The data come from the RNA Mapping Database (RMDB), library OK2TST. Structure probing data (DMS and 2A3) for a 177-nucleotide construct. The reactions ran in a buffer of 150 mM KOAc, 10 mM MgCl2 and 150 mM bicine (pH 8.5), at 24 C. 2A3 adducts were read by reverse transcription with SuperScript II with manganese.

[RMDB]
RNA sequence: GGGAACGACUCGAGUAGAGUCGAAAACUGAUGCAGAACGACUUCCUGCAUUAAAGAUUGGAUUUGGCAUUUUGCUGGCAAAUCCAUUAGUGAAAGAUCGGAGUCCUGAUGCUCGCAUAAAACCAGACUAUACUAAUUCGUUCGCGAAUUAGUAUAGAAAAGAAACAACAACAACAAC
Reactivity to DMS in 0.01 (KOAc 150mM, MgCl2 10mM, bicine 150mM(pH8.5), 24C), signal-to-noise 8, nucleotides 027 to 126: c110u000g010a030u010g020c010a020g010a150a120c260g010a050c040u010u010c050c010u000g010c050a020u000u010a040a100a100g010a120u000u000g000g000a010u000u000u000g000g000c000a050u000u010u010u010g010c230u010g000g000c010a000a010a000u000c000c000a020u000u000a040g030u000g010a090a090a070g010a090u010c160g000g000a050g010u000c010c060u000g000a160u010g020c030u000c060g010c140a070u010a040a050a100a110c040c050a110g000a280
Reactivity to 2A3 in 0.01 (KOAc 150mM, MgCl2 10mM, bicine 150mM(pH8.5), 24C), signal-to-noise 9, nucleotides 027 to 126: c020u040g010a030u160g000c000a000g020a080a010c020g020a030c040u090u030c020c010u020g030c010a000u020u070a080a090a030g180a120u070u110g010g000a010u000u010u020g030g070c010a020u040u100u140u300g120c120u030g040g080c000a000a000a010u000c000c000a000u000u030a020g030u020g070a210a140a030g050a040u130c110g020g010a010g020u010c000c010u120g090a050u040g010c020u020c040g040c040a070u150a140a090a010a020c020c010a010g030a040